[RMDB]
RNA sequence: GGGAACGACUCGAGUAGAGUCGAAAAACAGUUUUACGUAACCACUGGACCGGGUAGCUUUACUGGUCAACGCGUUGGUGCCAUUAUUGCUAAAACUUGGUGCACAGUAAACCCUAACUGUCAACUCGAGUGCUAUUACGUUCGCGUAAUAGCACUCAAAAGAAACAACAACAACAAC
Reactivity to DMS in 0.01 (KOAc 150mM, MgCl2 10mM, bicine 150mM(pH8.5), 24C), signal-to-noise 1, nucleotides 027 to 126: a070c070a060g000u000u000u010u070a120c080g000u020a070a050c190c090a040c100u000g000g020a010c030c010g010g000g030u000a070g000c100u000u000u000a030c070u000g000g010u000c080a100a050c000g030c300g000u000u000g010g030u000g000c040c040a060u020u000a050u010u000g020c080u010a000a020a150a240c040u000u000g050g010u010g010c040a070c000a010g000u000a080a130a090c110c030c040u010a020a030c030u010g010u000c130a060a160c170u000c150
Reactivity to 2A3 in 0.01 (KOAc 150mM, MgCl2 10mM, bicine 150mM(pH8.5), 24C), signal-to-noise 2, nucleotides 027 to 126: a000c020a000g030u000u040u020u060a090c080g030u040a030a050c070c010a010c050u040g010g050a000c000c000g010g000g060u000a020g040c010u040u100u040a030c010u030g030g000u040c040a030a060c090g090c070g110u080u210g080g010u080g060c020c000a000u040u050a040u030u130g020c080u090a120a070a050a070c010u050u120g000g020u080g040c040a030c000a130g040u050a020a090a100c000c000c000u030a020a010c000u010g050u100c040a070a050c030u040c140